[RMDB]
RNA sequence: GGGAACGACUCGAGUAGAGUCGAAAAGGGCUUGACGCAUCGCCCGAAUACGAUGCAUGUGCUUUUGCACUAAGAUAAAUGUCCGUAUAGUAGGGGACGUAGAACCUACUCAUUAAUGUCCGAAGAGUCUGGGACGAUCAUCAGGCGAGACUAAGAACCACUAUGGAUACUUCGGUAUCCAUAGUGGAAAAGAAACAACAACAACAAC
Reactivity to DMS in 0.01 (KOAc 150mM, MgCl2 10mM, bicine 150mM(pH8.5), 24C), signal-to-noise 2, nucleotides 027 to 156: g000g060g020c030u010u000g020a070c050g060c050a030u000c010g090c010c070c130g030a160a120u000a020c090g010a120u010g020c000a120u010g030u010g050c020u050u000u000u000g000c020a030c040u000a080a100g010a140u000a020a020a040u000g020u000c030c000g020u000a110u000a080g010u000a040g000g000g000g020a230c070g040u020a050g020a140a100c010c010u000a020c020u000c070a130u000u020a010a100u020g020u010c000c040g030a120a140g000a110g010u000c040u000g010g030g020a040c040g020a120u010c030a110u000c070a030g000g020c010g020a200g000a140c050u030a070a110g040a090a280
Reactivity to 2A3 in 0.01 (KOAc 150mM, MgCl2 10mM, bicine 150mM(pH8.5), 24C), signal-to-noise 3, nucleotides 027 to 156: g010g030g000c030u050u100g030a020c020g000c030a000u010c010g000c000c070c000g000a000a000u050a040c020g010a010u010g000c040a060u110g020u010g030c040u140u260u260u270g030c040a000c000u040a070a110g050a080u130a090a150a020u100g000u030c020c000g040u060a050u040a110g000u020a000g020g000g020g030a000c090g060u070a020g030a090a020c000c000u010a020c010u010c030a000u040u230a140a070u170g020u000c000c030g050a060a020g030a050g050u000c010u080g020g010g010a030c030g050a090u030c030a000u020c000a020g010g090c000g030a020g020a020c010u090a110a000g050a090a070